Structure probing data (2A3 and DMS) for a 207-nucleotide construct. For DMS the reverse transcriptase was MarathonRT. The data come from the RNA Mapping Database (RMDB), library RNAMAK.
[RMDB]
RNA sequence: GGGAACGACUCGAGUAGAGUCGAAAAUACUGCGUUUCGACGCAGUAAAAAAGAUAUGGACGUAGUUUAUGGGAGGGUAUUCAUUCGGAAACGAAUGGUACCCUUUGAUCAUAAGGUUCGAAGUCCUAAGUCAAAAAGAGGAAGUUCGCUUCCUCAAUGGUGAAACUUAGUUCGCUAAGUUUCACCAAAAAGAAACAACAACAACAAC
Reactivity to 2A3 in 0.01 (KOAc 150mM, MgCl2 10mM, bicine 150mM(pH8.5), 24C), signal-to-noise 1, nucleotides 027 to 156: u070a000c000u000g000c000g020u010u040u160c200g050a010c000g000c020a000g000u000a010a000a000a000a000a000g020a000u010a000u040g010g000a000c010g050u130a060g160u160u010u000a020u020g000g000g000a030g030g000g000u010a000u000u290c010a000u000u000c000g000g020a000a000a000c020g010a000a000u000g000g000u000a010c000c000c020u020u080u000g000a000u000c000a000u010a000a020g210g080u180u300c230g120a170a020g000u000c000c000u020a000a020g010u000c070a000a000a060a170a000g070a000g010g010a010a010g020u100u140c130g100c120u020u000c000c020u010c000a000a030
Reactivity to DMS in 0.01 (KOAc 150mM, MgCl2 10mM, bicine 150mM(pH8.5), 24C), signal-to-noise 2, nucleotides 027 to 156: u000a030c010u010g040c000g040u000u000u010c260g020a130c000g000c000a020g030u000a000a010a060a120a050a120g020a050u020a010u010g020g010a030c010g000u000a150g040u000u000u000a020u010g000g000g000a020g000g010g040u000a000u000u010c000a040u000u000c000g030g030a020a020a060c000g030a010a000u010g000g020u000a000c000c000c000u000u020u000g010a060u010c010a010u010a010a010g000g000u010u000c180g000a150a230g020u000c000c010u010a000a140g010u000c000a140a080a080a090a130g000a050g000g000a060a060g020u000u010c150g020c040u000u000c000c000u000c000a010a020
The RNA was probed in 150 mM KOAc, 10 mM MgCl2 and 150 mM bicine (pH 8.5) at 24 C. For 2A3, 1,051 sequencing reads were counted. For DMS, 4,023 sequencing reads were counted. High 2A3 reactivity points to a flexible backbone, as in loops and unpaired stretches.